Source: RMDB library TTRDEL, as collected in RNAgym. This 177-nucleotide RNA was probed chemically with DMS and 2A3. The DMS profile rests on 1,214 reads. For 2A3 the reverse transcriptase was SuperScript II with manganese. DMS adducts were read by reverse transcription with MarathonRT. For 2A3, 1,372 sequencing reads were counted.

RNA sequence: GGGAACGACUCGAGUAGAGUCGAAAAGAUAUGGAGGUUCUACCCACCGGUGAACUAACGUUGAAAUCGGAAACGAUGGAGUUAGAACCGAGGAACCUCCUAAGUCAAAGAAGGGUUCGCCCUUCAAUCUGUGCAUAAGGUUCGCCUUAUGCACAGAAAAAGAAACAACAACAACAAC
Reactivity to DMS in 0.01 (KOAc 150mM, MgCl2 10mM, bicine 150mM(pH8.5), 24C), signal-to-noise 2, nucleotides 027 to 126: g000a050u010a170u000g030g010a030g000g010u000u000c010u000a070c030c000c010a300c140c000g000g000u000g000a250a030c000u010a000a050c030g000u000u020g010a090a120a040u000c000g000g010a070a090a200c010g010a010u000g000g000a030g000u000u000a000g000a070a030c000c000g020a160g000g000a010a000c010c000u000c000c000u000a000a080g020u000c190a040a210a170g000a020a010g000g010g000u000u020c240g000c030c010c000u020u000c000a100a050
Reactivity to 2A3 in 0.01 (KOAc 150mM, MgCl2 10mM, bicine 150mM(pH8.5), 24C), signal-to-noise 1, nucleotides 027 to 126: g090a040u240a270u250g000g010a000g020g020u020u010c020u090a300c000c030c020a040c000c000g000g000u040g070a110a100c030u000a020a000c020g190u300u080g050a070a060a000u000c010g030g000a040a000a060c020g020a020u020g020g010a050g010u000u000a010g030a220a010c000c000g030a020g000g000a000a000c010c000u010c000c000u000a040a010g000u050c060a000a190a080g010a000a010g040g000g000u100u160c260g190c010c010c080u000u000c010a010a050